[RMDB]
RNA sequence: GGGAACGACUCGAGUAGAGUCGAAAAUAUGUUUGUAUUGGUGAUGGAUUGCUUUGCUCUGCAACUAUAUACUUUAAUUCUAAAGCCUUAGUCAAUAUAACUUCAUCCAUAUACUCAUUUACACCAAGCCUAGCGCAUAGUUCGCUAUGCGCUAGGCAAAAGAAACAACAACAACAAC
Reactivity to 2A3 in 0.01 (KOAc 150mM, MgCl2 10mM, bicine 150mM(pH8.5), 24C), signal-to-noise 3, nucleotides 027 to 126: u250a040u060g000u000u000u000g050u000a030u020u000g000g090u000g000a040u070g050g220a060u040u020g030c000u080u040u040g060c050u050c080u160g060c000a030a060c050u020a090u030a090u040a240c030u100u140u130a140a020u240u030c100u080a000a090a140g000c020c030u090u070a050g040u110c050a070a050u090a040u100a290a050c040u000u000c000a030u000c030c000a000u000a000u020a040c020u000c030a010u020u080u110a120c160a000c020c010a070a010
Source information:
Structure probing data (2A3) for a 177-nucleotide construct. The 2A3 profile rests on 934 reads. The data come from the RNA Mapping Database (RMDB), library OK1LIB. Conditions: 150 mM KOAc, 10 mM MgCl2 and 150 mM bicine (pH 8.5), 24 C.